[RMDB]
RNA sequence: GGGAACGACUCGAGUAGAGUCGAAAACCUGGUUUAGGGUUCCAGGCUAGCCCUAUCUAUCGGUCGAGUUGCGAGCGCUUAAGCUCAAAUUGAGUGGCUGAGUUAGUGGUGAACGUAUCCCUAUGUUAAAACGGUAGCUGCUUCGGCAGCUACCGAACUAUAUACCUAGCUUCGGCUAGGUAUAUAGAAAAGAAACAACAACAACAAC
Reactivity to DMS in 0.01 (KOAc 150mM, MgCl2 10mM, bicine 150mM(pH8.5), 24C), signal-to-noise 2, nucleotides 027 to 156: c000c040u000g000g000u000u020u000a060g020g050g000u030u000c020c020a080g020g020c000u000a300g010c010c000c000u000a050u000c030u000a100u000c030g010g000u000c030g000a130g020u010u000g000c180g020a100g040c040g000c270u010u010a060a130g000c000u000c030a020a040a080u010u000g000a150g020u000g030g000c000u000g000a090g000u000u000a030g010u000g010g030u000g020a110a130c050g000u000a110u010c000c000c010u000a230u000g000u030u010a080a070a070a230c020g000g000u000a020g000c000u010g020c000u000u000c300g040g000c040a020g010c000u000a000c000c000g020a010a040
Reactivity to 2A3 in 0.01 (KOAc 150mM, MgCl2 10mM, bicine 150mM(pH8.5), 24C), signal-to-noise 3, nucleotides 027 to 156: c010c000u020g000g030u020u080u050a050g020g010g000u040u060c020c030a030g020g020c020u020a020g000c000c000c020u000a020u050c040u040a100u060c030g030g000u010c030g050a090g050u040u090g150c090g090a010g000c060g030c110u250u220a130a030g000c000u030c040a020a070a050u080u090g050a060g100u160g030g040c010u000g020a000g020u030u020a040g010u130g240g000u040g020a050a010c030g000u070a100u080c020c010c010u000a050u100g060u030u110a060a070a010a000c000g010g000u000a000g010c000u020g030c000u010u060c190g070g000c010a000g000c000u000a000c000c010g000a000a000